[RMDB]
RNA sequence: GGGAACGACUCGAGUAGAGUCGAAAACGAACUUCGGGUGCGGUGUGUUCGGCAACUGCGCGACGCAAUGCAACAGCACGUCGAAGAACUACGCGAACUGACGAUCUCCGAGGUGGGCGCGCCGCGGCCCUGCUAAGUGAUUCGUCACUUAGCAGGGAAAAGAAACAACAACAACAAC
Reactivity to DMS in 0.01 (KOAc 150mM, MgCl2 10mM, bicine 150mM(pH8.5), 24C), signal-to-noise 9, nucleotides 027 to 126: c090g010a120a140c050u000u000c020g010g010g030u000g010c020g010g030u000g010u000g010u010u000c030g010g010c040a160a120c180u010g020c070g010c040g000a060c050g010c090a050a060u000g010c090a100a100c110a170g010c020a030c030g010u010c010g010a030a020g000a090a120c120u000a070c070g010c030g010a070a090c090u000g010a080c100g010a090u000c040u000c020c030g010a060g010g020u000g000g000g010c040g010c030g010c020c020g010c050g010g000
Reactivity to 2A3 in 0.01 (KOAc 150mM, MgCl2 10mM, bicine 150mM(pH8.5), 24C), signal-to-noise 9, nucleotides 027 to 126: c010g030a040a030c010u030u020c020g040g000g020u040g020c010g030g030u030g010u010g020u090u040c010g030g000c040a220a200c170u240g010c130g000c010g090a020c030g010c040a050a100u130g060c050a110a060c010a090g000c010a000c030g170u080c010g050a020a020g020a030a030c060u100a030c050g020c020g080a120a050c050u090g060a050c060g060a090u030c040u010c060c010g010a030g000g040u050g000g040g010c030g000c010g010c010c010g000c010g020g000